RNA sequence: GGGAACGACUCGAGUAGAGUCGAAAAGAUAUGGAGUCUGAGUGACAUGGAUGUAAUUCGGAAACGAAUUAAUCCAACAGCACUAGACUCCUAAGUCAAAAUCAGGCUUUACUUCGGUAAAGCCUGAGCUAUUGAGACACUUCGGUGUCUCAAUAGCAAAAGAAACAACAACAACAAC
Reactivity to DMS in 0.01 (KOAc 150mM, MgCl2 10mM, bicine 150mM(pH8.5), 24C), signal-to-noise 2, nucleotides 027 to 126: g000a000u020a090u030g000g000a020g000u000c000u000g010a060g020u000g000a060c160a190u010g020g010a020u010g010u000a000a030u010u000c000g000g000a030a000a050c000g000a010a000u000u000a010a030u000c000c000a080a070c300a180g010c000a000c000u000a030g000a010c000u000c000c000u000a010a070g000u010c010a150a120a130a260u010c000a010g010g010c010u000u000u010a000c000u000u010c210g010g010u010a010a000a030g030c000c000u000g000a020
Reactivity to 2A3 in 0.01 (KOAc 150mM, MgCl2 10mM, bicine 150mM(pH8.5), 24C), signal-to-noise 3, nucleotides 027 to 126: g020a000u010a010u080g010g010a000g020u010c010u150g230a010g070u020g010a080c160a300u300g010g000a060u090g110u300a000a010u000u000c010g000g010a010a000a000c000g020a030a000u030u020a020a000u000c010c020a110a070c150a060g010c000a000c010u010a000g000a010c000u000c000c000u000a000a000g000u000c000a000a040a040a260u070c010a010g010g000c010u040u000u000a010c010u050u150c300g130g000u000a020a020a000g000c070c000u000g000a000
An RNA of 177 nucleotides, treated with DMS and 2A3 and read out base by base. Reactivities are given for positions 27 through 126. For DMS, 2,432 sequencing reads were counted. For 2A3, 4,770 sequencing reads were counted. The reactions ran in a buffer of 150 mM KOAc, 10 mM MgCl2 and 150 mM bicine (pH 8.5), at 24 C.